[RMDB]
RNA sequence: GGGAACGACUCGAGUAGAGUCGAAAAGCUUUCCGGCGGCGAACAGCAAAUGCUGGCCAUUGCGCGCAUCCUGCGCACCGGGGUCAAGGUGCUGCUGCUGGAUGAGCCGACCGAAGGUCUUGCACCACAUCCACCUCCAUUUCGAUGGAGGUGGAUGAAAAGAAACAACAACAACAAC
Reactivity to 2A3 in 0.01 (KOAc 150mM, MgCl2 10mM, bicine 150mM(pH8.5), 24C), signal-to-noise 2, nucleotides 027 to 126: g010c010u000u050u020c050c040g000g000c050g010g000c030g000a060a020c000a030g000c000a010a030a080u120g030c030u030g040g010c000c030a150u090u090g020c030g000c000g000c020a110u180c050c130u190g000c000g020c000a000c020c030g180g050g020g000u030c040a070a110g190g040u100g040c030u020g030c000u030g000c000u000g020g000a040u040g020a010g010c020c010g090a180c000c000g010a030a010g000g030u090c020u050u120g030c030a050c050c000a010
Reactivity to DMS in 0.01 (KOAc 150mM, MgCl2 10mM, bicine 150mM(pH8.5), 24C), signal-to-noise 2, nucleotides 027 to 126: g010c010u000u000u000c020c060g050g010c060g010g010c050g000a170a190c060a020g000c020a020a110a210u010g000c010u000g000g000c000c020a090u000u010g000c040g020c000g020c080a150u020c160c140u010g010c020g020c000a040c070c110g000g020g000g040u010c010a020a090g050g020u000g010c030u000g000c300u000g000c000u000g000g000a020u010g010a180g040c000c020g000a130c000c070g000a070a010g000g000u010c020u000u010g010c090a240c020c010a180

Source information:
Structure probing data (2A3 and DMS) for a 177-nucleotide construct. For DMS, 1,573 sequencing reads were counted. It was measured as part of the RMDB library OK2TST. Conditions: 150 mM KOAc, 10 mM MgCl2 and 150 mM bicine (pH 8.5), 24 C.